Conditions: 150 mM KOAc, 10 mM MgCl2 and 150 mM bicine (pH 8.5), 24 C. The record gives the reactivity of an RNA of 177 nucleotides to DMS. It was measured as part of the RMDB library OK2TRN.
[RMDB]
RNA sequence: GGGAACGACUCGAGUAGAGUCGAAAACAAGGUAGUUCAAGACACUACCUUGGUUAUUAGUGUCUUGAACUAAUAACAGCCUUAGGUACGGUGGACAUGCGAAAGCAUGUCCAUCGUACUUAAGGCAGCACGUAGAUGGGUUCGCCCAUCUACGUGCAAAAGAAACAACAACAACAAC
Reactivity to DMS in 0.01 (KOAc 150mM, MgCl2 10mM, bicine 150mM(pH8.5), 24C), signal-to-noise 1, nucleotides 027 to 126: c050a120a140g010g010u000a010g020u000u000c030a060a020g000a030c050a010c000u000a020c270c100u000u020g000g020u020u010a070u010u000a010g020u000g010u000c050u010u000g000a020a040c010u000a000a020u000a050a070c130a140g010c000c000u000u000a000g010g000u000a000c000g020g030u000g010g000a050c010a000u010g030c000g010a120a050a160g000c020a000u000g000u000c010c010a010u010c000g040u000a000c000u000u000a000a000g000g010c010a010